Structure probing data (DMS and 2A3) for a 207-nucleotide construct. Values cover nucleotides 27 to 156. 2A3 is a SHAPE reagent: it acylates the 2'-hydroxyl of flexible nucleotides of all four kinds.
[RMDB]
RNA sequence: GGGAACGACUCGAGUAGAGUCGAAAAUGGUUAAUGGAAUCUCAUCACCGUUGCCCAGAGUGGUUCUAAUCAAAGGAAUCCACUGUCUAAAAAUUCAAGGUAGCAGCAUCAAGGUUUACAUCUUGUAAGCAAAGAGACUGGGGCACUGGGGCAGAUAGACCGUGAAAUAAUUCGUUAUUUCACGGUCAAAAGAAACAACAACAACAAC
Reactivity to DMS in 0.01 (KOAc 150mM, MgCl2 10mM, bicine 150mM(pH8.5), 24C), signal-to-noise 1, nucleotides 027 to 156: u000g040g030u000u020a120a060u000g010g030a170a010u000c020u000c020a070u010c000a040c020c040g060u000u000g000c020c010c010a140g010a130g060u000g000g020u000u000c000u020a070a210u000c140a100a120a300g000g000a030a050u000c000c010a040c000u000g010u000c070u010a030a070a080a120a230u000u000c080a080a060g000g010u000a050g010c020a030g000c050a070u000c040a060a050g040g000u000u000u020a100c080a050u000c120u000u000g000u000a040a040g020c060a200a120a140g000a140g000a160c060u000g000g000g040g010c040a070c080u000g000g000g000g000c040a050g000a120u000a140
Reactivity to 2A3 in 0.01 (KOAc 150mM, MgCl2 10mM, bicine 150mM(pH8.5), 24C), signal-to-noise 1, nucleotides 027 to 156: u040g000g050u120u100a060a000u080g050g060a110a130u040c030u050c050a020u050c040a020c040c010g020u060u030g040c020c000c000a030g010a010g010u030g000g000u010u000c050u100a160a170u120c100a140a120a110g030g040a000a010u130c000c060a000c000u010g010u030c030u020a000a000a040a140a180u140u170c080a040a040g020g000u040a000g070c030a000g020c010a060u050c060a080a030g050g000u020u100u260a040c040a030u030c040u040u040g060u030a050a000g060c040a150a050a030g020a010g000a000c000u040g000g000g010g030c000a010c000u040g000g000g030g050c010a010g010a070u230a010
For 2A3 the reverse transcriptase was SuperScript II with manganese.